[RMDB]
RNA sequence: GGGAACGACUCGAGUAGAGUCGAAAACGCGGAUACUUCGGUAUCCGCGAAAGAAGCGAAGGCCUACCGAAAUAAAACGGUAAUAAAUCGCAAAACGCCUAAAAAGCCUAGACUUCGGUCUAGGCAACUUACAUCGAUUCUUCGGAAUCGAUGUAAGAAAAGAAACAACAACAACAAC
Reactivity to 2A3 in 0.01 (KOAc 150mM, MgCl2 10mM, bicine 150mM(pH8.5), 24C), signal-to-noise 1, nucleotides 027 to 126: c000g040c030g000g000a000u000a000c010u060u060c160g050g000u010a000u010c000c000g020c000g000a000a000a000g040a120a010g000c020g000a000a050g040g010c010c010u000a010c000c000g120a000a300a000u300a030a210a000a010c000g020g000u030a000a000u060a010a080a000u000c000g000c030a050a050a000a040c060g030c000c000u110a180a160a080a060a000g000c010c000u000a000g000a010c000u000u060c300g070g000u000c010u000a000g010g000c010a000a000
Reactivity to DMS in 0.01 (KOAc 150mM, MgCl2 10mM, bicine 150mM(pH8.5), 24C), signal-to-noise 1, nucleotides 027 to 126: c010g000c000g010g000a000u000a000c010u010u000c200g030g030u000a000u000c000c020g030c020g000a000a070a090g000a200a140g000c010g000a070a030g000g020c240c110u000a020c000c000g020a100a080a050u000a060a100a090a050c000g030g000u000a000a040u000a030a050a220u000c010g030c010a100a030a100a070c140g000c020c040u020a010a010a110a140a080g010c010c000u000a010g010a000c000u000u010c120g020g000u000c000u000a000g000g030c010a000a030